[RMDB]
RNA sequence: GGGAACGACUCGAGUAGAGUCGAAAAGAUAUGGACGUGCUCCCCACCAACCGGAUCGCUGAACUACGCUGAUGGAUCGGAAACGAUCCUAAAGCGCAGCGAUCCGGUUGAGGCACGUCCUAAGUCACAGAAUAUCACUGUUCGCAGUGAUAUUCUGAAAAGAAACAACAACAACAAC
Reactivity to DMS in 0.01 (KOAc 150mM, MgCl2 10mM, bicine 150mM(pH8.5), 24C), signal-to-noise 3, nucleotides 027 to 126: g020a100u000a260u040g000g010a020c000g020u010g000c000u000c150c040c010c090a300c110c020a010a000c000c010g000g020a020u000c000g000c000u020g010a100a060c170u030a300c030g000c010u030g010a300u040g000g000a000u010c010g000g010a140a120a260c000g010a010u000c000c000u000a130a150a020g010c010g020c000a020g000c010g000a000u000c000c020g010g000u000u000g000a000g030g000c020a010c010g020u000c000c000u000a000a050g010u020c150a150
Reactivity to 2A3 in 0.01 (KOAc 150mM, MgCl2 10mM, bicine 150mM(pH8.5), 24C), signal-to-noise 1, nucleotides 027 to 126: g140a080u300a270u300g000g010a010c000g000u000g030c000u190c040c060c000c010a010c000c000a010a000c020c000g040g020a000u020c010g050c040u030g020a140a060c210u120a020c300g010c030u040g000a050u220g010g000a010u000c010g060g000a090a120a030c040g010a000u040c000c010u000a010a070a030g000c000g010c030a020g000c020g010a000u010c000c020g010g020u000u020g010a000g000g040c000a010c010g000u000c000c000u000a010a010g030u020c000a040

Background: Source: RMDB library TTRINS, as collected in RNAgym. An RNA of 177 nucleotides, treated with DMS and 2A3 and read out base by base. 2A3 adducts were read by reverse transcription with SuperScript II with manganese. The RNA was probed in 150 mM KOAc, 10 mM MgCl2 and 150 mM bicine (pH 8.5) at 24 C.